The record gives the reactivity of an RNA of 177 nucleotides to 2A3 and DMS. For DMS the reverse transcriptase was MarathonRT. Conditions: 150 mM KOAc, 10 mM MgCl2 and 150 mM bicine (pH 8.5), 24 C. The 2A3 profile rests on 1,786 reads.

RNA sequence: GGGAACGACUCGAGUAGAGUCGAAAAGCGCAACGCCGUCGAGGUGCGGCAGGCGCUGGCCGCGGUGACCGAGUACGCCAUCGCUCAGCUGGAGCCGCAGCAGUUCGAGGAGGCUGGCCGGCGUGGAGACUGAGUGCUCAUUCGUGAGCACUCAGUCAAAAGAAACAACAACAACAAC
Reactivity to 2A3 in 0.01 (KOAc 150mM, MgCl2 10mM, bicine 150mM(pH8.5), 24C), signal-to-noise 1, nucleotides 027 to 126: g000c000g000c010a080a050c120g020c000c000g060u050c070g210a150g080g100u130g040c060g000g020c080a120g080g000c020g000c040u010g020g000c100c000g040c010g040g100u090g010a080c020c060g060a070g100u100a060c060g050c050c000a070u020c050g000c000u070c030a030g000c020u050g020g050a020g010c000c000g000c010a010g050c000a050g130u070u050c030g000a070g090g050a030g010g110c070u070g030g040c020c000g010g020c010g040u050g040g060a160
Reactivity to DMS in 0.01 (KOAc 150mM, MgCl2 10mM, bicine 150mM(pH8.5), 24C), signal-to-noise 2, nucleotides 027 to 126: g030c050g030c050a130a090c180g010c000c010g030u000c010g020a090g020g020u000g010c020g010g010c000a070g040g000c020g020c030u000g010g050c040c050g030c030g030g020u000g010a060c030c010g010a220g000u000a140c180g020c020c000a080u000c010g010c010u000c150a100g000c010u010g000g010a180g020c020c030g000c040a040g020c030a010g000u000u000c030g000a060g010g030a140g010g020c020u000g010g020c070c030g010g010c020g020u020g010g010a180